RNA sequence: GGGAACGACUCGAGUAGAGUCGAAAAGAUAUGGAUAUAACAGAGCACUUGUAUUCGAACGAAGAACACGCUCGGAAACGAGCGUGGGAGUUCGAAUACAAGUGCGACGAAGUUAUAUCCUAAGUCAUCAAGUCUUAAACUUCGGUUUAAGACUUGAAAAAGAAACAACAACAACAAC
Reactivity to DMS in 0.01 (KOAc 150mM, MgCl2 10mM, bicine 150mM(pH8.5), 24C), signal-to-noise 1, nucleotides 027 to 126: g000a050u000a300u000g000g000a030u000a010u000a010a010c000a070g000a220g010c000a000c010u000u010g010u000a040u000u000c000g000a030a020c020g010a120a180g000a150a270c010a000c000g020c000u000c000g000g000a090a130a270c020g010a020g020c000g020u000g010g000g020a070g040u010u000c000g000a000a010u000a010c020a000a000g040u000g010c000g000a010c210g000a130a080g010u000u000a000u000a000u030c000c020u010a050a060g000u010c040a120

An RNA of 177 nucleotides, treated with DMS and read out base by base.
It was measured as part of the RMDB library TTRINS.
For DMS the reverse transcriptase was MarathonRT.
Reactivities are given for positions 27 through 126.